[RMDB]
RNA sequence: GGGAACGACUCGAGUAGAGUCGAAAAGAUAUGGAAGGGUAUUGAGCUGAUCGUCGGAAACGACGACCAGCAAUGAUGUACCUUCCUAAGUCAAAGUACCUAUCAUCGUUCGCGAUGAUAGGUACAAUCUAAUUGAGAAGUUCGCUUCUCAAUUAGAAAAAGAAACAACAACAACAAC
Reactivity to 2A3 in 0.01 (KOAc 150mM, MgCl2 10mM, bicine 150mM(pH8.5), 24C), signal-to-noise 5, nucleotides 027 to 126: g000a000u020a010u050g000g030a020a010g180g060g080u140a030u040u070g020a010g010c020u000g000a030u010c010g010u000c000g000g000a000a010a000c000g010a000c000g000a000c000c000a000g010c000a000a150u040g000a000u000g000u050a070c000c000u000u020c000c000u000a010a000g000u000c030a100a090a100g010u000a010c000c000u000a000u000c000a010u000c000g060u080u080c300g020c020g170a000u000g000a000u000a000g010g000u000a000c000a000a000
Reactivity to DMS in 0.01 (KOAc 150mM, MgCl2 10mM, bicine 150mM(pH8.5), 24C), signal-to-noise 5, nucleotides 027 to 126: g010a010u000a030u020g010g000a010a000g000g010g010u000a010u000u000g000a070g030c000u000g010a010u000c000g000u000c000g020g000a010a010a040c000g010a010c010g010a000c010c000a010g020c000a230a090u020g000a080u000g000u000a030c000c000u000u000c000c000u000a010a090g000u000c010a100a110a140g000u000a000c000c000u000a000u000c000a000u010c000g010u010u020c250g020c020g010a010u000g000a010u000a000g010g010u000a000c000a030a050